[RMDB]
Chemical mapping of a 177-nucleotide RNA with 2A3 and DMS. In probing experiments dimethyl sulfate is read out at A N1 and C N3, which are open when not base-paired. It was measured as part of the RMDB library TTRDEL. The reactions ran in a buffer of 150 mM KOAc, 10 mM MgCl2 and 150 mM bicine (pH 8.5), at 24 C. For 2A3, 2,113 sequencing reads were counted.

RNA sequence: GGGAACGACUCGAGUAGAGUCGAAAAGAUAUGGAUUGGUAUCAAGCUCACAGUCGGAAACGACUGUAGCUGACAACGCCACUGUCCUAAGUCAAAACUCAUUACCUUGUUCGCAAGGUAAUGAGAAGUGCUAUAGAGCGUUCGCGCUCUAUAGCACAAAAGAAACAACAACAACAAC
Reactivity to 2A3 in 0.01 (KOAc 150mM, MgCl2 10mM, bicine 150mM(pH8.5), 24C), signal-to-noise 2, nucleotides 027 to 126: g030a010u110a060u150g000g000a030u110u250g030g020u110a090u280c050a170a050g000c000u110c020a020c010a000g030u000c010g050g000a060a070a040c020g000a000c040u000g000u000a010g000c000u000g000a040c040a040a060c210g030c010c020a120c210u200g020u000c000c000u040a130a050g050u080c080a080a000a040a100c020u010c010a000u010u000a000c000c000u030u000g040u070u120c160g040c230a010a000g000g000u010a000a000u000g000a000g000a000a020
Reactivity to DMS in 0.01 (KOAc 150mM, MgCl2 10mM, bicine 150mM(pH8.5), 24C), signal-to-noise 2, nucleotides 027 to 126: g000a080u000a140u010g000g040a090u010u010g040g000u000a080u010c150a080a080g000c010u010c220a010c000a000g000u000c010g010g000a160a070a200c000g000a040c000u000g020u000a020g000c000u000g000a050c190a100a040c180g010c010c030a070c300u020g020u020c000c010u000a050a120g010u010c130a060a040a140a150c000u000c000a020u000u000a000c010c000u000u000g000u010u000c230g020c000a010a000g010g020u000a000a000u000g000a000g010a020a080